[RMDB]
RNA sequence: GGGAACGACUCGAGUAGAGUCGAAAAGGGUGAUGUCUCCUAACCUUUAUCAAUGGGGGCACUCGGUCGUCCUGUGGGUAGAAAUUUUAUUUCGUGCCUACCUUAGACGCUUGUCGUCGGGAGUAUGUGGGACUGAUGAACUUCGGUUCAUCAGUAAACUGAGUUAAGGUUUCGACCUUAACUCAGUAAAAGAAACAACAACAACAAC
Reactivity to DMS in 0.01 (KOAc 150mM, MgCl2 10mM, bicine 150mM(pH8.5), 24C), signal-to-noise 2, nucleotides 027 to 156: g000g010g020u000g010a080u010g000u010c020u000c000c000u010a110a040c040c020u000u000u010a110u010c080a100a080u020g030g080g000g030g030c010a090c030u000c050g000g010u000c020g030u000c000c000u010g000u010g010g030g020u000a300g010a000a020a030u000u010u000u000a110u000u040u000c020g000u010g030c000c000u000a020c000c200u010u010a100g020a030c000g030c040u000u010g030u010c000g020u000c010g000g010g000a120g010u010a060u000g040u000g060g020g020a080c010u010g010a010u000g000a020a010c000u000u010c300g040g030u000u000c000a000u000c000a020g020u000a010a080
Reactivity to 2A3 in 0.01 (KOAc 150mM, MgCl2 10mM, bicine 150mM(pH8.5), 24C), signal-to-noise 4, nucleotides 027 to 156: g090g010g010u140g020a050u060g010u040c010u030c000c020u050a060a120c010c020u110u180u110a150u160c090a060a120u160g000g010g000g010g000c010a010c000u000c000g000g010u000c000g010u000c000c000u000g020u030g010g000g010u020a030g080a010a010a020u120u240u200u140a160u030u210u110c030g040u180g000c000c000u010a010c000c010u000u100a070g000a000c000g010c060u170u300g090u300c030g000u000c000g000g050g000a060g040u120a120u290g060u120g010g070g050a010c000u000g000a000u010g000a010a000c010u030u100c220g060g000u000u000c000a000u000c000a000g000u000a010a020